[RMDB]
RNA sequence: GGGAACGACUCGAGUAGAGUCGAAAAGCUAUACGAUACAUAUAAACACAACGUAUAGCGCCUAAUCUUGUGUUUAUAUGUAUGAUUAGGCACGACGGUGGACAUGCGAAAGCAUGUCCAUCGUCGAGCUGGUUCAAGGCUUCGGCCUUGAACCAGCAAAAGAAACAACAACAACAAC
Reactivity to DMS in 0.01 (KOAc 150mM, MgCl2 10mM, bicine 150mM(pH8.5), 24C), signal-to-noise 1, nucleotides 027 to 126: g030c000u000a120u060a160c130g000a060u000a040c000a000u000a010u030a000a020a000c020a000c000a000a060c240g010u000a120u000a110g000c000g010c020c020u000a140a230u000c060u020u000g000u010g000u000u030u000a000u050a030u000g000u020a000u000g030a170u020u000a040g000g060c000a140c020g000a040c000g000g020u000g000g000a000c000a020u020g060c070g000a150a150a180g000c000a020u000g000u000c040c000a000u000c000g000u000c000g020a030
Reactivity to 2A3 in 0.01 (KOAc 150mM, MgCl2 10mM, bicine 150mM(pH8.5), 24C), signal-to-noise 2, nucleotides 027 to 126: g030c000u030a010u000a190c070g030a010u020a010c010a010u050a010u020a010a040a000c000a000c010a030a060c100g040u060a060u050a130g060c020g110c030c010u110a090a090u020c010u000u020g010u020g020u000u040u020a030u010a010u030g050u000a020u020g010a020u000u120a040g020g000c040a000c020g000a000c000g000g000u000g000g010a000c010a000u000g000c010g060a090a010a000g000c000a000u030g000u000c000c000a000u000c010g000u000c000g000a000

The record gives the reactivity of an RNA of 177 nucleotides to DMS and 2A3.
The RNA was probed in 150 mM KOAc, 10 mM MgCl2 and 150 mM bicine (pH 8.5) at 24 C.
It was measured as part of the RMDB library OK1LIB.